RNA sequence: GGGAACGACUCGAGUAGAGUCGAAAAGAUAUGGAGCCAGGCGCUCGAUAAGCGUAGUGUCGGAAACGACAUCACGCUUUUGACGAGCGCUGGCUCCUAAGUCAAACUGUAGACUUCGGUCUACAGACAUCUCCGUAAUGUUCGCAUUACGGAGAUGAAAAGAAACAACAACAACAAC
Reactivity to 2A3 in 0.01 (KOAc 150mM, MgCl2 10mM, bicine 150mM(pH8.5), 24C), signal-to-noise 4, nucleotides 027 to 126: g020a010u060a030u140g010g000a010g000c010c040a140g300g290c020g020c010u000c030g060a090u100a230a000g010c010g000u020a030g010u060g000u020c020g040g000a040a050a020c010g010a000c000a010u020c010a010c010g010c010u050u010u050u110g100a060c020g010a000g020c020g010c000u000g000g000c000u000c000c000u010a000a000g000u000c010a020a040a080c010u000g000u020a000g000a010c000u020u060c300g120g000u000c000u000a000c000a000g010a050
Reactivity to DMS in 0.01 (KOAc 150mM, MgCl2 10mM, bicine 150mM(pH8.5), 24C), signal-to-noise 5, nucleotides 027 to 126: g010a030u000a300u010g000g000a020g010c000c000a020g030g020c000g030c000u000c010g010a150u010a010a000g030c000g030u000a040g040u000g000u000c010g010g000a080a070a170c010g020a010c000a000u000c050a000c000g010c000u010u000u000u010g010a210c150g000a010g000c000g020c000u000g000g010c000u010c000c010u000a000a060g000u000c020a140a140a260c000u000g000u000a010g010a010c000u000u010c230g020g010u000c000u000a000c000a000g010a250
The record gives the reactivity of an RNA of 177 nucleotides to 2A3 and DMS. Source: RMDB library TTRDES, as collected in RNAgym. The reactions ran in a buffer of 150 mM KOAc, 10 mM MgCl2 and 150 mM bicine (pH 8.5), at 24 C. As a SHAPE reagent, 2A3 marks flexible, mostly unpaired nucleotides at the ribose 2'-OH.